[RMDB]
RNA sequence: GGGAACGACUCGAGUAGAGUCGAAAAGCGCGGCCGCGCACAGCGUGCGGGUCACCCCGAUCACCGACUCCAUCCGUAGCGGGGUCACCCAGGUGAUCAUGUGCGCCAGGACCGUCGGCAGCGAGAAACUGCCGAUCACUUUCGAGUGAUCGGCAGUAAAAGAAACAACAACAACAAC
Reactivity to DMS in 0.01 (KOAc 150mM, MgCl2 10mM, bicine 150mM(pH8.5), 24C), signal-to-noise 2, nucleotides 027 to 126: g020c020g000c020g010g000c010c020g020c030g030c050a050c130a120g000c060g040u000g010c050g010g010g010u000c060a010c000c010c060c090g000a050u000c010a100c030c010g010a150c020u000c030c060a140u000c190c220g000u000a090g010c020g000g000g000g000u000c060a030c040c110c190a120g010g020u000g010a020u000c030a030u000g000u000g000c010g000c000c100a140g000g020a120c060c040g010u000c030g000g000c010a070g010c010g000a150g030a070a130
Reactivity to 2A3 in 0.01 (KOAc 150mM, MgCl2 10mM, bicine 150mM(pH8.5), 24C), signal-to-noise 2, nucleotides 027 to 126: g050c020g000c010g020g000c010c000g000c010g000c030a020c000a010g040c020g050u060g030c020g010g010g000u040c020a020c000c000c020c020g000a030u040c080a160c200c010g300a300c080u050c040c030a300u100c100c120g050u120a030g030c050g020g000g000g000u000c030a080c020c060c000a010g020g040u030g000a010u000c020a080u120g000u010g000c000g000c030c000a060g000g050a200c060c010g120u210c030g060g000c010a000g040c000g010a060g090a100a220